An RNA of 207 nucleotides, treated with 2A3 and read out base by base. For 2A3 the reverse transcriptase was SuperScript II with manganese. The 2A3 profile rests on 664 reads. Conditions: 150 mM KOAc, 10 mM MgCl2 and 150 mM bicine (pH 8.5), 24 C. Reactivities are given for positions 27 through 156.

[RMDB]
RNA sequence: GGGAACGACUCGAGUAGAGUCGAAAAUUCAACCCCAAAAAUCUAGUGCAAAUAUUGUCUUAAUUACUUAGGCUAAAAGAAAUAAGUAUUAAAGCGGGACAAGGCAUCGACAUCUGAUACAAAUAUUUUUAGCAUAUUAGAUUCGUCUAAUAUGCAAGCGUUAUAAAUCGUUCGCGAUUUAUAACGCAAAAGAAACAACAACAACAAC
Reactivity to 2A3 in 0.01 (KOAc 150mM, MgCl2 10mM, bicine 150mM(pH8.5), 24C), signal-to-noise 1, nucleotides 027 to 156: u120u110c110a030a190c010c000c000c040a050a000a000a110a080u020c060u080a100g000u010g090c060a080a230a220u120a170u080u030g000u010c040u040u130a120a090u130u050a100c030u030u030a020g060g000c000u090a080a080a100a170g060a040a070a000u020a050a000g060u000a010u090u100a160a160a100g170c140g060g000g000a000c030a030a010g000g010c020a000u030c060g100a030c080a020u070c120u190g020a010u050a090c030a000a160a080u140a160u060u240u080u090u180a050g000c000a020u000a000u000u000a000g000a000u010u000c050g040u000c050u000a000a000u000a000u000g000c000a010a010